[RMDB]
RNA sequence: GGGAACGACUCGAGUAGAGUCGAAAACACCACUUGGUGAUCCAAUAAUCUACCGGGUGCAAGACAUCGAACUGUGUCUCCGUCGCCGCUAAGCGCGACUGAUCGAAGUUGUCCCAGUGGCACAGAAGUGCGAUCAUUUAUUCGUAAAUGAUCGCACAAAAGAAACAACAACAACAAC
Reactivity to 2A3 in 0.01 (KOAc 150mM, MgCl2 10mM, bicine 150mM(pH8.5), 24C), signal-to-noise 3, nucleotides 027 to 126: c010a000c010c020a020c040u020u070g000g000u010g010a010u030c050c040a130a170u250a050a020u040c070u140a050c010c000g030g000g000u000g040c050a060a030g050a040c040a090u060c050g020a050a050c020u030g000u000g000u020c000u000c020c020g010u010c000g010c030c000g040c180u210a160a080g020c070g000c000g120a000c020u010g010a020u050c030g050a030a020g030u060u030g020u050c000c010c000a010g050u060g030g010c010a010c010a050g040a150a030
Reactivity to DMS in 0.01 (KOAc 150mM, MgCl2 10mM, bicine 150mM(pH8.5), 24C), signal-to-noise 3, nucleotides 027 to 126: c060a190c300c000a060c040u010u000g030g010u020g000a000u010c150c080a120a100u020a200a020u000c010u010a010c030c000g040g000g000u010g020c070a080a090g020a130c200a110u010c060g000a020a080c060u000g010u000g010u010c000u000c010c140g020u000c010g070c010c020g010c150u000a110a200g000c150g030c000g000a020c000u000g000a090u000c040g020a040a070g010u000u010g000u000c000c020c030a100g010u000g010g020c000a000c020a040g010a150a120

Notes
An RNA of 177 nucleotides, treated with 2A3 and DMS and read out base by base. DMS adducts were read by reverse transcription with MarathonRT. For DMS, 1,798 sequencing reads were counted. It was measured as part of the RMDB library OK2TST. The reactions ran in a buffer of 150 mM KOAc, 10 mM MgCl2 and 150 mM bicine (pH 8.5), at 24 C. Values cover nucleotides 27 to 126.